Source: RMDB library RNAMAK, as collected in RNAgym.
This 207-nucleotide RNA was probed chemically with 2A3 and DMS.
For DMS, 6,930 sequencing reads were counted.
The RNA was probed in 150 mM KOAc, 10 mM MgCl2 and 150 mM bicine (pH 8.5) at 24 C.
2A3 adducts were read by reverse transcription with SuperScript II with manganese.
DMS adducts were read by reverse transcription with MarathonRT.
RNA sequence: GGGAACGACUCGAGUAGAGUCGAAAAGCGUACUACAGAAUCUUUUGACGGUCGAGUGUGCUCCCCACCUAGUCCCAAAUAGGACUAGAGGCACACGACCGAUAAGAUUCUGUAUCGCAAACCUAUCGUUUAAUACUUCGGUAUUAAACGAUAGGAAUCAUAUACGCAAGUUCGCUUGCGUAUAUGAAAAAGAAACAACAACAACAAC
Reactivity to 2A3 in 0.01 (KOAc 150mM, MgCl2 10mM, bicine 150mM(pH8.5), 24C), signal-to-noise 8, nucleotides 027 to 156: g010c000g030u090a070c040u010a000c020a000g000a010a000u010c000u040u140u160u210g240a190c050g000g000u020c050g090a120g230u030g000u000g010c010u100c060c030c010c000a010c000c010u000a000g000u010c030c030c030a220a300a160u300a150g000g000a000c000u000a000g000a020g010g010c000a000c000a000c000g000a000c000c000g040a040u030a030a000g000a000u000u000c000u000g000u010a010u130c010g000c010a050a030a130c000c000u000a000u000c000g000u000u010u000a000a000u000a000c010u030u050c280g120g000u000a000u000u000a000a000a010c000g000a000u000a000g000g000a000a000
Reactivity to DMS in 0.01 (KOAc 150mM, MgCl2 10mM, bicine 150mM(pH8.5), 24C), signal-to-noise 3, nucleotides 027 to 156: g010c020g020u000a050c060u010a020c000a010g010a070a000u000c010u030u000u000u000g020a180c080g030g010u000c000g020a160g020u000g060u000g040c060u000c300c090c020c060a300c180c020u000a010g010u000c000c010c000a090a200a230u000a060g000g000a030c010u000a000g010a220g020g000c000a010c010a130c000g010a020c010c000g030a020u000a020a030g000a030u000u000c000u000g010u000a000u000c040g000c020a100a110a150c000c000u000a000u000c010g000u000u000u000a000a010u000a000c000u000u010c280g060g010u000a010u000u010a000a000a010c010g000a010u000a010g000g000a020a030